[RMDB]
RNA sequence: GGGAACGACUCGAGUAGAGUCGAAAAGACGCUCCGGACGGAUGAACUGGAACCCUGCUUUCAUGGCAAACGGGUUGUAUUUGCUCAUCGACGACUGGAUCUCGAUGAUUGGCCGGUCGUGCAUCCAGAAAAUGAGUAAUUUCGAUUACUCAUUUUCAAAAGAAACAACAACAACAAC
Reactivity to DMS in 0.01 (KOAc 150mM, MgCl2 10mM, bicine 150mM(pH8.5), 24C), signal-to-noise 9, nucleotides 027 to 126: g010a110c120g020c130u000c020c020g010g020a090c050g010g010a040u000g010a070a060c150u000g000g010a040a040c020c010c010u000g010c040u000u000u010c220a100u020g010g010c030a030a090a100c180g010g000g010u000u000g010u000a070u000u010u010g010c080u000c020a030u000c020g010a080c080g010a060c020u000g000g010a170u000c020u000c070g000a080u010g000a110u000u000g000g010c020c020g010g010u000c030g010u000g000c090a070u000c020c030a170
Reactivity to 2A3 in 0.01 (KOAc 150mM, MgCl2 10mM, bicine 150mM(pH8.5), 24C), signal-to-noise 9, nucleotides 027 to 126: g050a010c030g020c090u000c020c020g020g020a030c030g060g030a060u050g020a130a050c040u070g030g060a010a020c010c000c000u010g020c020u090u190u240c130a160u210g030g000c020a060a080a150c110g010g020g000u030u030g120u060a100u040u110u100g030c010u010c020a020u020c020g070a070c070g010a020c040u080g120g050a220u020c020u020c040g070a080u080g020a060u060u090g070g000c010c010g000g010u020c000g000u010g020c010a040u000c000c000a020